The data come from the RNA Mapping Database (RMDB), library OK3TST. Structure probing data (2A3) for a 207-nucleotide construct. For 2A3, 490 sequencing reads were counted.

RNA sequence: GGGAACGACUCGAGUAGAGUCGAAAACAUUUGGUACUUUGGAGUCCAUAUCCUACUUGAAACUCUAGGAUCUGGCCCUCACAUUUAUGUAGUGCUUUAUUUUACAGUUUACAAAACUUCUGCUUGUCCAUGUGUGUCUGUAAAGUCAUAUGAGGCAUGCCACUCAUAUCUUCGGAUAUGAGUGGCAAAAAGAAACAACAACAACAAC
Reactivity to 2A3 in 0.01 (KOAc 150mM, MgCl2 10mM, bicine 150mM(pH8.5), 24C), signal-to-noise 2, nucleotides 027 to 156: c020a070u120u080u160g030g010u050a060c040u110u110u050g010g000a010g020u000c030c000a000u000a000u020c000c000u030a070c070u040u150g150a210a240a100c060u110c060u040a000g010g000a000u000c080u010g020g020c020c050c000u010c050a140c020a080u150u240u120a140u140g130u070a040g000u020g000c000u020u270u170a200u050u200u060u110a080c060a060g030u140u140u050a100c040a040a120a160a080c000u050u010c050u050g060c060u050u000g000u000c010c030a040u020g060u000g000u000g030u010c000u020g090u160a110a020a040g000u020c080a010u030a020u000g060a110g020g000c040a000